[RMDB]
The record gives the reactivity of an RNA of 177 nucleotides to 2A3 and DMS. For 2A3 the reverse transcriptase was SuperScript II with manganese.
RNA sequence: GGGAACGACUCGAGUAGAGUCGAAAAUAUCUACAGGGGUGGCACCGACUUGCUCAUCACCUCCGCCUCAAUUCGCGUGGCGAGCAGCGCCGCCUCGUCGUACAGCUCCACCAUGCGCCGGCCCAGCAGUGCGUAGUGCUUUCGAGCACUACGCACUAAAAGAAACAACAACAACAAC
Reactivity to 2A3 in 0.01 (KOAc 150mM, MgCl2 10mM, bicine 150mM(pH8.5), 24C), signal-to-noise 2, nucleotides 027 to 126: u070a000u030c050u060a020c090a070g000g080g000g000u020g030g000c020a010c010c070g050a080c060u150u100g020c000u000c090a010u090c010a030c010c040u030c000c040g010c000c000u160c090a100a120u190u150c080g000c020g050u010g000g000c040g010a010g000c000a010g000c000g000c030c000g000c000c000u010c010g050u020c000g000u050a050c020a110g000c000u000c000c030a030c000c000a070u160g000c000g000c020c000g020g010c020c020c000a050g020c050
Reactivity to DMS in 0.01 (KOAc 150mM, MgCl2 10mM, bicine 150mM(pH8.5), 24C), signal-to-noise 1, nucleotides 027 to 126: u090a080u020c060u020a000c090a300g000g000g000g020u030g030g000c150a120c170c100g010a040c140u060u020g080c000u020c000a090u000c050a050c040c000u020c090c050g020c080c140u010c010a140a100u000u000c040g000c170g010u000g000g000c300g110a090g010c030a020g020c020g000c000c060g030c030c000u000c000g010u000c200g080u010a060c060a110g000c020u000c000c050a080c010c020a000u000g000c080g000c000c020g090g000c010c010c000a080g040c240
DMS adducts were read by reverse transcription with MarathonRT.